[RMDB]
RNA sequence: GGGAACGACUCGAGUAGAGUCGAAAAUAAUAAGCACCGGUCCUUCACACAAUGGUAUCAUGAGCAUGUUGGUGGUGUCUAUGACAACUCUAUCACAUGCCCAUUGACAGUUGCAGUAAUUGCUGGAUCCUUGAUAUUUGUUCGCAAAUAUCAAGGAAAAAGAAACAACAACAACAAC
Reactivity to DMS in 0.01 (KOAc 150mM, MgCl2 10mM, bicine 150mM(pH8.5), 24C), signal-to-noise 4, nucleotides 027 to 126: u010a080a090u010a110a120g000c070a080c050c050g020g010u000c050c030u000u000c100a110c070a110c060a030a070u010g010g030u010a090u000c040a030u000g010a050g010c010a010u010g000u010u000g020g020u000g010g020u000g010u000c060u010a080u010g000a080c160a080a060c080u010c010u000a010u000c030a010c010a010u000g000c010c010c000a020u010u000g010a040c110a150g000u000u010g010c030a080g020u000a070a090u020u000g010c010u000g000g010a300
Reactivity to 2A3 in 0.01 (KOAc 150mM, MgCl2 10mM, bicine 150mM(pH8.5), 24C), signal-to-noise 2, nucleotides 027 to 126: u040a000a030u080a030a020g030c010a010c030c020g050g030u050c000c000u050u060c020a010c000a000c010a060a070u050g080g000u120a060u120c020a020u030g020a000g020c010a000u040g040u070u130g100g010u010g000g000u030g030u050c120u150a200u230g030a010c020a030a030c030u000c010u100a010u030c000a010c010a030u010g000c030c000c010a020u000u060g020a020c020a030g030u050u060g000c020a030g030u110a100a060u100u090g020c010u020g010g000a020

This 177-nucleotide RNA was probed chemically with DMS and 2A3. For DMS the reverse transcriptase was MarathonRT. 2A3 adducts were read by reverse transcription with SuperScript II with manganese.